Source: RMDB library OK2TST, as collected in RNAgym. The record gives the reactivity of an RNA of 177 nucleotides to DMS. Reactivities are rounded to 0.1 and cut off at 0 and 3. Reactivities are given for positions 27 through 126. The RNA was probed in 150 mM KOAc, 10 mM MgCl2 and 150 mM bicine (pH 8.5) at 24 C.
[RMDB]
RNA sequence: GGGAACGACUCGAGUAGAGUCGAAAACUCCAGGCAGAAGCUAGAAAUUCAGGAACUGGGAAUGUCUCGGGAGAUGAGUCGACCAGUCGCGGGGGAGCAAGAGCCAGGCAACAUAGAUUUUUGGCAGAGAUCACAGUUUGUUCGCAAACUGUGAUCUAAAAGAAACAACAACAACAAC
Reactivity to DMS in 0.01 (KOAc 150mM, MgCl2 10mM, bicine 150mM(pH8.5), 24C), signal-to-noise 1, nucleotides 027 to 126: c040u010c000c010a070g010g030c020a120g020a120a060g000c010u020a040g010a090a060a100u000u000c190a020g010g000a140a020c060u050g010g030g000a160a050u010g010u000c010u000c010g010g010g030a150g000a150u020g000a110g000u000c010g030a130c050c010a030g000u000c060g030c170g030g010g010g000g010a100g000c020a100a040g010a140g000c010c010a100g010g030c080a070a000c090a000u010a080g030a120u000u000u000u000u010g020g000c170a220g010